Structure probing data (DMS) for a 207-nucleotide construct. The reactions ran in a buffer of 150 mM KOAc, 10 mM MgCl2 and 150 mM bicine (pH 8.5), at 24 C. Values cover nucleotides 27 to 156. DMS adducts were read by reverse transcription with MarathonRT.

RNA sequence: GGGAACGACUCGAGUAGAGUCGAAAAGGGGUCGGAUGGAGGCGAAAGACAUGCUCGGUACUGAAGCCUCCACGGUACCGGAGCAACAGCUUUCGCUACCCACCCAUCCGACGGAGGCACCCAAAGAGACUAUGGACCUUCGGGUCCAUAGUCUCAACAUAACGGAUAUCUUCGGAUAUCCGUUAUGAAAAGAAACAACAACAACAAC
Reactivity to DMS in 0.01 (KOAc 150mM, MgCl2 10mM, bicine 150mM(pH8.5), 24C), signal-to-noise 1, nucleotides 027 to 156: g000g060g030g000u000c000g020g010a070u000g020g010a300g030g010c000g000a010a010a020g040a110c020a100u020g030c080u000c030g000g030u020a020c000u020g020a010a120g000c010c000u000c030c000a010c050g010g020u010a000c030c020g050g030a000g030c010a270a230c150a140g010c000u020u000u000c020g030c000u000a010c010c020c100a300c000c000c020a020u000c040c000g010a010c000g000g010a040g100g060c050a130c010c010c000a040a200a140g020a020g010a070c030u000a010u000g020g000a080c000c040u020u010c300g010g080g080u000c000c000a010u000a000g000u060c010u000c010a020a220